[RMDB]
RNA sequence: GGGAACGACUCGAGUAGAGUCGAAAACAGUGGCUCUCCAACUGGGUCUUCAAAUCUGCAUGUAUACCGAUUGCCGAAGGACGCAACGUUCUGCCGCGUGAUGAUCCACGCUGGCACUGGCCGCCUGUCAUGCCCUGUAGUUCGCUACAGGGCAUGAAAAAGAAACAACAACAACAAC
Reactivity to DMS in 0.01 (KOAc 150mM, MgCl2 10mM, bicine 150mM(pH8.5), 24C), signal-to-noise 2, nucleotides 027 to 126: c120a040g000u000g000g040c040u000c070u000c050c060a090a120c040u010g010g010g000u000c030u010u000c060a050a070a090u010c040u020g000c070a030u000g030u000a070u040a120c110c040g030a060u010u000g040c030c010g000a160a030g010g000a030c100g000c120a030a090c110g010u000u000c030u000g020c010c000g000c100g000u000g010a120u000g000a080u000c070c000a000c030g000c010u040g000g000c010a010c100u000g000g000c110c090g000c050c010u000g060
Reactivity to 2A3 in 0.01 (KOAc 150mM, MgCl2 10mM, bicine 150mM(pH8.5), 24C), signal-to-noise 2, nucleotides 027 to 126: c020a030g060u050g040g000c020u010c010u030c060c000a060a080c070u040g000g040g030u020c020u080u070c050a080a040a110u070c040u090g060c060a090u080g080u130a080u060a180c010c110g120a190u050u120g010c030c010g070a070a050g000g030a030c040g010c090a120a060c090g040u060u030c000u040g000c010c020g000c000g030u000g050a110u100g010a010u020c010c020a020c030g000c100u180g020g000c020a000c020u010g030g010c020c030g040c020c000u070g060